[RMDB]
RNA sequence: GGGAACGACUCGAGUAGAGUCGAAAAUCGAUGAAUUCAGUCUACGAGUGGUUGUCGAAACAGCCUACUGGAACCAAAGAACUUAUUGUACCGGAUUUCGCAUUACAUCAGACUGCGUUGAAUGCGAUAUGGGCUCAUUAUUCGUAAUGAGCCCAUAAAAAGAAACAACAACAACAAC
Reactivity to 2A3 in 0.01 (KOAc 150mM, MgCl2 10mM, bicine 150mM(pH8.5), 24C), signal-to-noise 1, nucleotides 027 to 126: u090c030g010a010u070g020a050a170u060u020c020a000g060u000c000u030a110c140g160a040g050u040g050g000u020u020g060u090c090g080a060a100a120c030a010g050c000c000u040a040c060u110g070g000a050a020c020c000a020a150a000g000a070a030c090u120u100a090u100u190g040u060a070c010c010g120g020a140u110u000u000c000g010c000a030u020u110a150c000a010u120c010a010g150a220c120u080g030c140g050u020u020g000a010a000u060g010c000g000a000
Reactivity to DMS in 0.01 (KOAc 150mM, MgCl2 10mM, bicine 150mM(pH8.5), 24C), signal-to-noise 2, nucleotides 027 to 126: u020c020g020a080u000g000a080a070u000u000c020a030g010u000c050u010a170c180g010a100g020u010g000g020u000u000g020u020c180g010a170a050a170c050a060g000c020c050u000a050c020u010g000g000a050a090c140c080a060a090a150g000a070a090c100u000u000a080u010u000g000u000a130c050c040g040g000a110u000u020u000c010g000c000a020u000u010a050c020a040u000c100a110g010a090c100u000g020c150g000u000u000g000a040a020u000g000c040g020a070
Structure probing data (2A3 and DMS) for a 177-nucleotide construct. 2A3 is a SHAPE reagent: it acylates the 2'-hydroxyl of flexible nucleotides of all four kinds. The reactions ran in a buffer of 150 mM KOAc, 10 mM MgCl2 and 150 mM bicine (pH 8.5), at 24 C. Source: RMDB library OK2TST, as collected in RNAgym. Reactivities are given for positions 27 through 126.